[RMDB]
RNA sequence: GGGAACGACUCGAGUAGAGUCGAAAAGAUAUGGAUCCUGUAUUUCGAAGAACUGGGUCAGUUCGGAAACGAACUGAGCCCAGGGAGAAAGACAGGAUCCUAAGUCAAACCCCAGCUUCGGCUGGGGGUUUGAUCUGCUGUUCGCAGCAGAUCAAACAAAAGAAACAACAACAACAAC
Reactivity to DMS in 0.01 (KOAc 150mM, MgCl2 10mM, bicine 150mM(pH8.5), 24C), signal-to-noise 2, nucleotides 027 to 126: g000a070u000a300u010g000g000a010u000c000c000u020g010u000a050u000u000u010c000g000a150a230g030a160a180c020u000g000g020g000u000c010a010g010u000u000c000g000g000a130a090a240c000g020a010a010c000u000g010a080g010c010c000c000a000g000g000g000a100g020a020a000a030g000a030c010a000g000g010a000u000c000c000u000a010a080g010u000c030a140a130a300c020c000c000c000a000g000c010u010u010c260g050g020c000u010g000g010g020g000
Reactivity to 2A3 in 0.01 (KOAc 150mM, MgCl2 10mM, bicine 150mM(pH8.5), 24C), signal-to-noise 1, nucleotides 027 to 126: g000a030u100a020u180g030g000a000u000c010c000u000g000u020a080u010u030u020c130g120a300a100g010a230a100c020u010g000g000g000u010c030a000g030u030u020c000g040g000a080a070a050c020g020a000a000c000u000g050a120g060c000c000c010a000g010g050g000a070g000a030a030a000g020a000c000a000g010g000a000u000c000c000u000a000a000g010u000c040a120a080a190c010c010c000c030a020g060c020u150u280c300g280g000c000u000g000g010g000g020

Structure probing data (DMS and 2A3) for a 177-nucleotide construct. For 2A3, 2,341 sequencing reads were counted. Reactivities are given for positions 27 through 126.